[RMDB]
RNA sequence: GGGAACGACUCGAGUAGAGUCGAAAACAAGCGCGGCAGGUGCUCCGGAUGUUUGGAGCUGGGUCGCAAGCUGUAUCGGCACAUGCGAUGCCGGCCUCCUGUGCGGCCAGACUCUGGCAACCUGGCCUCUACUCAGCCGGUUCGCUGGUUGGGUAGAAAAAGAAACAACAACAACAAC
Reactivity to DMS in 0.01 (KOAc 150mM, MgCl2 10mM, bicine 150mM(pH8.5), 24C), signal-to-noise 1, nucleotides 027 to 126: c060a040a300g010c020g010c030g020g030c040a040g010g000u000g010c040u020c000c000g000g000a100u030g000u010u020u000g010g000a040g000c000u010g010g000g050u030c030g050c020a060a110g000c150u010g000u030a190u030c240g000g000c000a260c300a300u030g030c060g000a110u000g000c000c000g000g000c300c040u020c100c030u010g020u000g010c090g010g000c000c000a030g010a020c050u010c030u000g000g000c150a090a060c070c000u010g000g000c000c010
Reactivity to 2A3 in 0.01 (KOAc 150mM, MgCl2 10mM, bicine 150mM(pH8.5), 24C), signal-to-noise 2, nucleotides 027 to 126: c050a070a000g040c010g000c020g060g020c020a020g050g020u050g030c020u020c020c020g070g070a160u170g120u200u170u300g050g000a010g000c010u000g040g000g000u000c000g000c000a000a010g000c000u060g020u250a230u290c230g000g000c000a030c000a180u300g100c060g140a100u100g240c000c000g000g000c010c010u000c000c010u050g030u050g060c010g010g000c010c000a020g010a070c020u030c040u080g010g010c030a020a020c000c010u020g050g000c000c010